Source: RMDB library ARCHII, as collected in RNAgym. An RNA of 207 nucleotides, treated with 2A3 and read out base by base. Values cover nucleotides 27 to 156. The 2A3 profile rests on 859 reads. For 2A3 the reverse transcriptase was SuperScript II with manganese.
RNA sequence: GGGAACGACUCGAGUAGAGUCGAAAAACGAAGCGGCUAAAACUUACACAACUCGCCCAAAGCACCCUGCCCGUCGGGUCGCUGAGGGUUAACUCAAUAGACACGGCUAAGCAUGUAGUACCGACAGCGGAGUACUGGCGGACGGGGGUUCAAAUCCCCACAACCUGUAGUUCGCUACAGGUUGUGGAAAAGAAACAACAACAACAAC
Reactivity to 2A3 in 0.01 (KOAc 150mM, MgCl2 10mM, bicine 150mM(pH8.5), 24C), signal-to-noise 1, nucleotides 027 to 156: a000c050g050a090a000g060c010g050g000c040u100a020a000a190a000c070u170u260a050c090a050c000a040a080c030u030c130g070c000c000c000a060a050a010g050c000a070c000c000c000u010g010c010c000c000g040u010c000g000g030g000u030c030g000c000u000g000a030g000g000g000u000u020a000a000c000u000c070a070a140u090a160g050a060c050a010c150g140g000c080u120a120a040g030c010a040u090g010u130a000g010u050a020c000c020g100a090c060a010g000c000g000g020a010g010u100a210c000u010g010g050c000g000g000a000c010g000g000g000g000g000u020u040c020a050a090a060u050c000c000